[RMDB]
RNA sequence: GGGAACGACUCGAGUAGAGUCGAAAAGAUAUGGAGUACGAAGAUGCCGACGAAGGCUUUCGGAAACGAAAGCCAGAGGAACUACAUCUAGUACUCCUAAGUCAAAAGCCAGCGUUCGCGCUGGCAAUCGCUAUAAUAAGUUCGCUUAUUAUAGCGAAAAAGAAACAACAACAACAAC
Reactivity to DMS in 0.01 (KOAc 150mM, MgCl2 10mM, bicine 150mM(pH8.5), 24C), signal-to-noise 6, nucleotides 027 to 126: g010a030u010a300u000g000g010a010g010u000a010c000g000a140a140g000a000u000g010c050c090g000a210c080g010a300a130g000g010c000u000u000u000c000g010g000a080a070a140c000g010a010a010a010g010c000c000a030g000a300g000g010a090a060c100u020a120c010a010u000c000u000a210g000u000a000c000u000c000c000u000a010a040g000u000c030a100a080a090a130g000c000c000a000g000c010g020u010u010c250g020c010g000c000u000g000g000c000a010a000
Reactivity to 2A3 in 0.01 (KOAc 150mM, MgCl2 10mM, bicine 150mM(pH8.5), 24C), signal-to-noise 5, nucleotides 027 to 126: g020a010u030a030u130g010g000a010g010u000a000c020g050a110a080g000a020u050g120c090c080g120a300c040g020a200a030g000g000c000u000u000u000c010g000g000a030a030a000c000g000a000a010a000g010c010c010a000g020a020g000g030a040a040c110u230a060c180a010u000c010u020a010g000u000a000c000u000c000c000u010a000a010g010u010c020a040a050a050a100g010c000c010a010g000c020g030u100u110c290g000c000g000c120u000g010g000c010a000a010